RNA sequence: GGGAACGACUCGAGUAGAGUCGAAAACUGCUCGGCCAGUGCGCCGCACCGGGAACAGUAUUCGGAUCCGGAAAAGCCGAUCCUGCGGGUGGCUCACGGCGCUAUCGAACGCUGGCAGACAGGCGGCGUCUGAAUGUGCAUUCGUGCACAUUCAGACAAAAGAAACAACAACAACAAC
Reactivity to 2A3 in 0.01 (KOAc 150mM, MgCl2 10mM, bicine 150mM(pH8.5), 24C), signal-to-noise 2, nucleotides 027 to 126: c000u020g050c080u010c050g030g000c030c000a060g040u060g120c020g000c000c000g030c030a050c010c020g000g040g030a130a030c000a060g090u220a300u160u270c020g040g040a040u020c060c070g030g000a120a130a020a050g030c010c010g020a050u050c000c020u050g030c140g070g090g000u020g000g030c070u040c050a030c000g000g020c010g000c040u160a170u270c090g060a060a020c110g000c050u000g030g000c000a010g010a080c010a010g000g110c050g110g000c080
Reactivity to DMS in 0.01 (KOAc 150mM, MgCl2 10mM, bicine 150mM(pH8.5), 24C), signal-to-noise 2, nucleotides 027 to 126: c010u000g010c140u010c060g010g000c000c010a030g020u000g010c060g030c000c020g030c120a100c010c000g030g030g020a120a050c010a080g020u000a200u020u000c110g000g000a060u000c100c040g010g000a040a060a200a060g000c000c000g000a100u010c080c000u010g000c080g030g030g040u000g000g000c050u000c110a200c010g020g000c020g030c010u020a180u040c150g000a110a130c180g000c000u000g010g010c030a010g000a030c050a030g000g000c090g020g000c140
Structure probing data (2A3 and DMS) for a 177-nucleotide construct. Values are in units of 0.01, from 0 to 300, in steps of 10. The reactions ran in a buffer of 150 mM KOAc, 10 mM MgCl2 and 150 mM bicine (pH 8.5), at 24 C. For 2A3, 1,437 sequencing reads were counted.